An RNA of 207 nucleotides, treated with 2A3 and read out base by base. The 2A3 profile rests on 559 reads. Conditions: 150 mM KOAc, 10 mM MgCl2 and 150 mM bicine (pH 8.5), 24 C.
RNA sequence: GGGAACGACUCGAGUAGAGUCGAAAAGGAUGGGCGCUUCCAAUGAAAUUCGGUCUUGGAAGAACUCACUGCAGUACAUGCAUACAGUCUUGGUUAACAGUUCAGUGCCAGACAAUGCAGGGGUAGCAAUCGAAUUUAAAAUCCCACUUACCUCACGGCCAGACAUUUAGUUCGCUAAAUGUCUGGCAAAAGAAACAACAACAACAAC
Reactivity to 2A3 in 0.01 (KOAc 150mM, MgCl2 10mM, bicine 150mM(pH8.5), 24C), signal-to-noise 2, nucleotides 027 to 156: g080g000a120u080g070g000g000c040g030c020u010u000c010c030a000a050u280g100a000a030a170u300u280c140g150g000u060c080u010u000g000g030a000a000g000a000a000c010u000c000a130c130u090g000c010a030g150u100a040c010a060u040g000c000a010u020a130c100a060g000u010c010u130u090g030g020u100u110a060a050c040a150g000u200u260c130a100g000u020g010c000c000a000g000a010c000a060a030u100g010c070a050g020g070g000g010u000a000g070c030a050a090u100c120g020a000a040u080u090u090a170a150a020a050u030c000c000c000a000c000u030u040a080c000c000u040c110a050c070g040